[RMDB]
Description: Conditions: 150 mM KOAc, 10 mM MgCl2 and 150 mM bicine (pH 8.5), 24 C. An RNA of 177 nucleotides, treated with DMS and 2A3 and read out base by base. The 2A3 profile rests on 4,130 reads.

RNA sequence: GGGAACGACUCGAGUAGAGUCGAAAAUGUGUUCAGUUUGAGGGAGGAUGAUAAAAUGGAACGGAGAUUGCAAGGAGACGUAGAAAAUAAAGUAGGAGCAAAUGGAUUUUCUGCUUGGCGGUAUAGCGUCUUUUAUAAAGUUCGCUUUAUAAAAGACAAAAGAAACAACAACAACAAC
Reactivity to DMS in 0.01 (KOAc 150mM, MgCl2 10mM, bicine 150mM(pH8.5), 24C), signal-to-noise 5, nucleotides 027 to 126: u010g020u010g020u000u010c050a090g010u010u010u010g010a080g010g000g020a060g010g010a060u000g010a080u010a030a050a100a110u010g010g010a050a070c110g010g010a060g010a080u000u000g010c060a070a090g000g010a060g010a050c130g020u000a060g000a070a050a050a070u000a040a040a090g020u010a050g010g010a050g010c070a040a080a070u010g000g000a080u000u000u000u000c040u000g000c040u000u000g010g010c060g010g010u000a070u010a090g010c110
Reactivity to 2A3 in 0.01 (KOAc 150mM, MgCl2 10mM, bicine 150mM(pH8.5), 24C), signal-to-noise 3, nucleotides 027 to 126: u130g030u010g030u050u060c010a040g020u020u110u130g050a050g000g030g000a020g030g020a070u020g020a010u100a060a090a020a080u110g050g000a040a020c030g030g000a020g020a050u050u070g040c030a020a030g020g010a040g020a000c020g010u030a020g060a050a090a020a030u120a020a060a030g050u050a040g010g080a030g000c020a040a050a070u060g030g020a040u040u050u070u050c010u010g020c040u030u020g030g030c040g010g040u070a060u050a120g040c030